[RMDB]
RNA sequence: GGGAACGACUCGAGUAGAGUCGAAAAUGACUAAGGGUGGCGAUUUCCUCGCUACAAUCAUCGCAGCAAUUAUUGGCACGCUUGUUAUGGGCUUGUUUGCUAACGUGCCUUACGCUCAAGCUGCUGGCAGCACCGAUAUAUUCGUAUAUCGGUGCUGAAAAGAAACAACAACAACAAC
Reactivity to 2A3 in 0.01 (KOAc 150mM, MgCl2 10mM, bicine 150mM(pH8.5), 24C), signal-to-noise 5, nucleotides 027 to 126: u120g050a030c080u130a100a110g200g050g020u030g010g000c010g000a010u050u110u130c020c020u020c010g000c010u020a010c000a000a100u120c050a030u110c070g000c020a000g010c010a020a170u160u020a070u160u110g010g000c000a010c030g040c040u070u120g060u180u180a170u180g060g050g010c010u090u100g140u260u150u100g030c020u050a040a000c010g000u000g000c000c000u020u030a080c110g010c000u030c050a050a030g000c010u010g000c020u030g070g020
Reactivity to DMS in 0.01 (KOAc 150mM, MgCl2 10mM, bicine 150mM(pH8.5), 24C), signal-to-noise 6, nucleotides 027 to 126: u010g010a150c120u010a110a100g010g020g020u010g000g020c010g010a050u000u010u000c180c150u000c020g010c010u010a020c030a090a080u010c080a060u010c160g000c050a020g010c030a110a090u010u010a100u010u000g010g010c000a020c030g010c070u000u000g010u010u010a110u020g020g000g020c020u000u010g000u000u010u000g010c070u000a060a090c030g020u000g000c000c000u000u010a040c220g000c120u010c090a080a120g000c010u000g010c010u010g020g000